[RMDB]
RNA sequence: GGGAACGACUCGAGUAGAGUCGAAAAAUUUAAAAAAAGAUGAUACAGAAGAAGUCAUCUAUUAUGGCGACACAGGGGUAUCAAAAAACCCAGUUGAGUUAGUCGAGGGCUGGUUUAGUGGAUGGAGCUAAGGCUACAAAUUCGUUUGUAGCCUUAGAAAAGAAACAACAACAACAAC
Reactivity to DMS in 0.01 (KOAc 150mM, MgCl2 10mM, bicine 150mM(pH8.5), 24C), signal-to-noise 2, nucleotides 027 to 126: a060u020u000u010a010a010a080a140a100a060a050g010a060u010g000a020u010a160c100a170g020a110a080g000a120a190g030u010c010a010u010c010u000a090u010u010a080u010g010g000c010g000a060c060a050c100a090g040g000g010g000u020a030u000c050a000a090a060a110a100a050c080c000c000a090g030u000u000g010a080g010u000u000a040g000u000c030g010a100g000g000g020c110u000g000g010u010u010u010a050g020u000g000g010a070u010g010g020a130g000